Structure probing data (2A3 and DMS) for a 177-nucleotide construct. 2A3 adducts were read by reverse transcription with SuperScript II with manganese. For DMS, 5,497 sequencing reads were counted. Conditions: 150 mM KOAc, 10 mM MgCl2 and 150 mM bicine (pH 8.5), 24 C. High 2A3 reactivity points to a flexible backbone, as in loops and unpaired stretches.
[RMDB]
RNA sequence: GGGAACGACUCGAGUAGAGUCGAAAAUUCGAUUAUGGUCAACCCAACGUGCGUACGUGUACCGGUAUUCUAUGGUCAUGCAGAAGCGGUGCAUGUGGAGACGCGUGCUCCGAUCGAUGCAGAGCAAAUUAGUGGGAUACUUCGGUAUCCCACUAAUAAAAGAAACAACAACAACAAC
Reactivity to 2A3 in 0.01 (KOAc 150mM, MgCl2 10mM, bicine 150mM(pH8.5), 24C), signal-to-noise 3, nucleotides 027 to 126: u040u010c030g060a020u120u010a100u300g090g010u030c050a110a100c020c000c010a000a020c020g030u070g040c040g050u080a040c020g040u060g000u070a010c020c010g030g020u040a160u110u040c070u050a080u100g130g000u110c060a110u090g020c020a000g000a050a000g060c000g010g000u010g020c000a000u010g010u030g010g010a060g020a040c010g000c000g020u020g020c000u030c010c020g050a120u080c010g000a010u010g010c030a010g020a020g090c050a060a040
Reactivity to DMS in 0.01 (KOAc 150mM, MgCl2 10mM, bicine 150mM(pH8.5), 24C), signal-to-noise 5, nucleotides 027 to 126: u010u010c070g020a070u000u000a070u010g020g010u000c080a100a160c020c000c020a130a100c070g020u000g010c110g020u000a030c040g040u000g000u000a040c040c030g000g010u010a060u000u000c050u000a070u000g020g010u010c140a100u010g010c050a030g000a160a080g010c000g010g000u010g000c000a010u000g020u010g010g000a230g010a150c010g000c020g040u000g010c030u000c020c010g010a030u010c060g020a180u000g010c050a080g000a110g000c090a060a080